[RMDB]
RNA sequence: GGGAACGACUCGAGUAGAGUCGAAAACAAGCCUCGGCCACUUGCUGGCCUUGUCUCAUGGCCCUCUUACCCUCUGCUUCCUCCCUGAAUUCCUUCCUCCAUCCUUGCAUGGCAGAGCCCAGGAUGGUGGACAGAUACCAGGAACUCUUCCUCGGGAUACCGAUAAUAUCUUCGGAUAUUAUCGGUAAAAAGAAACAACAACAACAAC
Reactivity to 2A3 in 0.01 (KOAc 150mM, MgCl2 10mM, bicine 150mM(pH8.5), 24C), signal-to-noise 3, nucleotides 027 to 156: c060a000a050g060c030c030u070c070g000g030c000c010a030c030u180u230g040c110u060g080g000c020c020u010u030g010u010c000u030c020a100u080g050g030c020c010c000u040c060u030u170a080c010c000c010u050c030u060g020c020u120u040c030c030u050c020c000c000u020g020a030a080u050u030c010c000u020u000c000c000u000c020c000a000u000c000c000u040u110g060c060a120u110g060g000c050a060g060a030g140c020c020c010a000g000g000a000u000g000g020u010g000g000a000c000a000g060a000u040a060c020c000a030g020g020a020a050c020u020c020u190u030c030c010u040c030g040g000g000a030
Reactivity to DMS in 0.01 (KOAc 150mM, MgCl2 10mM, bicine 150mM(pH8.5), 24C), signal-to-noise 2, nucleotides 027 to 156: c060a120a080g000c040c010u010c140g020g030c000c050a060c090u010u000g020c070u000g020g010c030c020u000u000g010u000c020u000c050a110u000g020g010c000c030c020u000c030u000u000a100c010c010c020u000c020u000g010c030u010u000c010c010u010c050c000c030u000g000a100a160u000u000c020c020u010u000c000c010u000c010c000a050u000c010c000u020u020g030c020a080u010g010g030c010a200g000a170g030c010c030c050a130g020g020a060u000g000g030u010g010g010a020c060a020g000a140u000a080c060c010a060g010g010a060a110c070u000c050u010u000c030c000u000c030g000g000g010a290